An RNA of 177 nucleotides, treated with 2A3 and read out base by base. 2A3 adducts were read by reverse transcription with SuperScript II with manganese. The 2A3 profile rests on 783 reads.
RNA sequence: GGGAACGACUCGAGUAGAGUCGAAAAAUAUACGCCAUGCGUUGACUGGUUUGCCGAUGCCCACCAGUCGGCUUGAUGCCUUUGAUAACUGCCGGGAGCUGUGGCGGGAGUGUCAGCGCUGGUUAGGGACUCCGCCCCUAUUCGUAGGGGCGGAGUCAAAAGAAACAACAACAACAAC
Reactivity to 2A3 in 0.01 (KOAc 150mM, MgCl2 10mM, bicine 150mM(pH8.5), 24C), signal-to-noise 2, nucleotides 027 to 126: a020u300a000u030a020c010g000c020c030a130u300g000c010g040u000u030g000a030c030u050g020g050u180u220u200g020c000c130g100a140u060g020c000c000c070a130c010c000a030g040u190c050g000g000c000u000u250g120a130u300g000c030c030u140u100u180g080a090u050a250a050c040u050g030c100c000g030g040g000a130g050c020u090g080u220g060g000c000g020g000g020a170g020u120g000u040c000a000g000c000g000c000u000g000g000u000u000a060g030g110